Source: RMDB library OK2TRN, as collected in RNAgym.
Chemical mapping of a 177-nucleotide RNA with DMS and 2A3.
Reactivities are given for positions 27 through 126.
2A3 adducts were read by reverse transcription with SuperScript II with manganese.
For 2A3, 12,814 sequencing reads were counted.

[RMDB]
RNA sequence: GGGAACGACUCGAGUAGAGUCGAAAACACACUCAGUCCUGUGUGGAAGGUGUCUGGGUGCAGUCUCAGGGGUGACCCUGCAAGCACCAUGCCCUCCAGGUGGCAGCCAUCACCAUGCCUCACUCAGGCAAAGUUAACAUUUCGAUGUUAACUUUGCAAAAGAAACAACAACAACAAC
Reactivity to DMS in 0.01 (KOAc 150mM, MgCl2 10mM, bicine 150mM(pH8.5), 24C), signal-to-noise 7, nucleotides 027 to 126: c080a080c100a050c060u000c110a100g010u000c030c030u000g020u010g020u010g010g010a090a050g010g020u000g000u020c100u010g000g010g030u000g010c030a070g020u000c200u000c020a030g010g010g000g000u010g000a250c010c010c000u000g010c160a110a140g000c020a020c010c020a110u010g010c010c000c010u000c060c050a090g010g020u010g010g010c040a060g010c080c050a060u000c040a070c050c020a070u000g010c020c020u000c050a080c090u010c070a100g000
Reactivity to 2A3 in 0.01 (KOAc 150mM, MgCl2 10mM, bicine 150mM(pH8.5), 24C), signal-to-noise 6, nucleotides 027 to 126: c040a000c010a000c020u090c050a050g090u070c020c020u080g010u020g030u060g090g070a080a050g050g000u060g030u110c090u150g140g000g000u020g000c010a010g060u020c050u020c140a010g030g020g010g030u120g090a150c010c010c000u000g000c030a070a070g020c000a000c000c010a030u050g020c020c000c010u030c030c020a050g020g060u040g040g000c020a030g060c020c010a060u050c010a010c030c010a030u120g010c000c000u040c020a050c020u080c040a010g050